[RMDB]
RNA sequence: GGGAACGACUCGAGUAGAGUCGAAAAGAUAUGGAGUAUCAGCUUUGAUCUAUCACUUCGGAAACGAAGUAUAGGGAGCUGUGGCUCCUAAGUCAAACCUCAUGUAACGUUCGCGUUACAUGAGGAACAUAUGUAGUUGCUUCGGCAACUACAUAUGAAAAGAAACAACAACAACAAC
Reactivity to DMS in 0.01 (KOAc 150mM, MgCl2 10mM, bicine 150mM(pH8.5), 24C), signal-to-noise 7, nucleotides 027 to 126: g000a040u000a250u010g000g000a020g010u000a140u010c000a010g010c000u000u010u010g010a110u010c010u000a010u000c210a010c000u000u000c010g010g000a070a060a140c000g010a010a010g010u000a010u000a010g010g010g010a010g020c000u000g010u000g020g010c000u000c000c000u000a020a080g010u000c030a130a110a160c010c000u000c000a000u000g000u000a000a010c000g010u000u010c210g010c010g010u000u000a000c000a000u010g000a000g000g000a020a050
Reactivity to 2A3 in 0.01 (KOAc 150mM, MgCl2 10mM, bicine 150mM(pH8.5), 24C), signal-to-noise 8, nucleotides 027 to 126: g030a010u050a020u130g000g000a010g010u040a070u200c000a000g020c010u290u300u300g150a100u080c010u010a010u010c120a020c030u000u000c000g030g000a040a040a020c010g010a010a010g010u000a000u010a000g020g060g080a010g000c000u000g010u070g180g010c000u000c000c000u010a060a010g030u010c050a080a050a160c000c000u000c000a000u000g000u010a000a010c020g000u040u060c300g010c000g130u000u000a000c000a000u000g000a000g000g000a010a000

Background
The record gives the reactivity of an RNA of 177 nucleotides to DMS and 2A3. For DMS, 15,930 sequencing reads were counted. For DMS the reverse transcriptase was MarathonRT. The data come from the RNA Mapping Database (RMDB), library TTRDEL. Conditions: 150 mM KOAc, 10 mM MgCl2 and 150 mM bicine (pH 8.5), 24 C.